[RMDB]
RNA sequence: GGGAACGACUCGAGUAGAGUCGAAAAGAUAUGGAUCAUAGGGAGCGUUACACUCGGAAACGAGUGCGGACGCGAAGAACUAUGAGUCCUAAGUCAAAACUCUCCGAGGGUUCGCCCUCGGAGAGAACUCAUUAACAAGGUUCGCCUUGUUAAUGAGAAAAGAAACAACAACAACAAC
Reactivity to DMS in 0.01 (KOAc 150mM, MgCl2 10mM, bicine 150mM(pH8.5), 24C), signal-to-noise 4, nucleotides 027 to 126: g020a020u000a020u010g000g000a180u000c000a010u000a010g000g010g000a010g030c000g030u000u000a070c010a000c000u000c000g030g010a010a010a010c000g010a010g000u000g010c050g000g000a000c000g050c000g000a070a120g000a180a200c000u010a000u000g000a030g020u010c000c000u010a000a110g000u000c010a130a080a120a160c000u000c000u000c010c010g010a030g010g010g020u000u010c270g010c000c000c000u010c010g000g000a000g010a010g000a020a070
Reactivity to 2A3 in 0.01 (KOAc 150mM, MgCl2 10mM, bicine 150mM(pH8.5), 24C), signal-to-noise 2, nucleotides 027 to 126: g000a000u010a010u050g000g000a000u000c000a010u010a010g010g000g000a000g000c000g020u020u070a010c000a000c000u000c000g020g030a010a000a000c000g000a000g000u010g000c040g150g050a000c000g010c000g010a060a010g000a000a000c010u010a000u020g020a020g230u090c000c000u000a000a000g010u010c010a010a030a050a300c010u020c000u000c010c000g000a000g030g030g030u110u120c260g120c010c010c000u000c000g000g000a000g000a000g000a000a000